Chemical mapping of a 177-nucleotide RNA with DMS and 2A3.
The reactions ran in a buffer of 150 mM KOAc, 10 mM MgCl2 and 150 mM bicine (pH 8.5), at 24 C.
The DMS profile rests on 8,728 reads.
RNA sequence: GGGAACGACUCGAGUAGAGUCGAAAAUUAUGAUUGAUGCUUGUAAACGUGCUUCUGCAGCAACAAUCAAUAUUGUAGUGCCAUAUUAUGGAUAUGCAAGACAAGAUAGAAAAGCCCGUAGCCGUGAGACAAUGUAUCCAUUCGUGGAUACAUUGUCAAAAGAAACAACAACAACAAC
Reactivity to DMS in 0.01 (KOAc 150mM, MgCl2 10mM, bicine 150mM(pH8.5), 24C), signal-to-noise 3, nucleotides 027 to 126: u030u020a070u010g000a010u010u010g010a090u000g000c010u030u020g020u000a060a140a070c060g010u030g000c050u000u010c060u010g000c000a020g000c020a020a080c030a010a020u000c010a080a090u010a050u000u000g010u000a010g000u020g000c100c030a010u000a050u000u030a060u030g010g000a030u000a030u000g000c000a020a010g010a040c050a050a010g000a110u000a090g000a060a050a080a080g010c020c010c000g000u020a070g010c010c000g000u010g000a170
Reactivity to 2A3 in 0.01 (KOAc 150mM, MgCl2 10mM, bicine 150mM(pH8.5), 24C), signal-to-noise 8, nucleotides 027 to 126: u190u080a140u190g030a010u000u020g000a010u030g010c100u130u110g030u050a040a120a060c040g050u110g070c030u080u040c040u060g000c000a000g000c000a010a020c000a000a020u030c040a040a050u130a110u080u030g020u020a050g050u030g160c080c020a010u040a070u180u200a140u180g110g020a010u030a020u090g000c000a000a000g000a040c020a040a010g040a130u130a050g170a100a100a020a020g050c000c010c020g030u030a020g020c020c020g020u040g050a030